Overview: An RNA of 177 nucleotides, treated with 2A3 and DMS and read out base by base.
[RMDB]
RNA sequence: GGGAACGACUCGAGUAGAGUCGAAAAUAAAGUAAAUGGACUCAGAAUUAUGAUGCCCAAUUAUCAAAGUAGAAGAUUAUGGUAAGCUAAGUCCUGCUUUCCUUACCUCCCUUCUAAUUUUUGAAGGCGUAAAGAGAAGUUUCGACUUCUCUUUACGAAAAGAAACAACAACAACAAC
Reactivity to 2A3 in 0.01 (KOAc 150mM, MgCl2 10mM, bicine 150mM(pH8.5), 24C), signal-to-noise 6, nucleotides 027 to 126: u030a000a050a020g070u060a010a180a180u110g020g010a030c030u030c090a050g110a150a090u240u120a080u190g050a030u120g000c010c020c010a030a060u140u070a060u080c020a040a040a060g040u060a050g020a120a010g010a020u080u080a060u290g010g010u020a030a010g000c010u010a020a000g010u050c020c010u020g040c020u000u020u000c000c000u000u030a030c000c010u040c030c030c010u000u000c020u030a130a190u110u120u030u060u050g020a020a020g060g020
Reactivity to DMS in 0.01 (KOAc 150mM, MgCl2 10mM, bicine 150mM(pH8.5), 24C), signal-to-noise 8, nucleotides 027 to 126: u020a080a080a140g010u000a030a060a110u000g010g010a040c030u000c030a040g000a180a140u000u000a080u010g000a040u010g020c010c000c020a060a080u010u000a080u000c030a030a040a050g000u000a020g000a030a030g000a060u000u010a070u010g010g000u000a000a010g010c070u000a020a020g020u010c190c260u010g000c010u000u000u000c150c010u000u000a020c020c010u010c300c090c000u000u000c000u020a030a040u000u000u000u000u000g010a050a080g010g010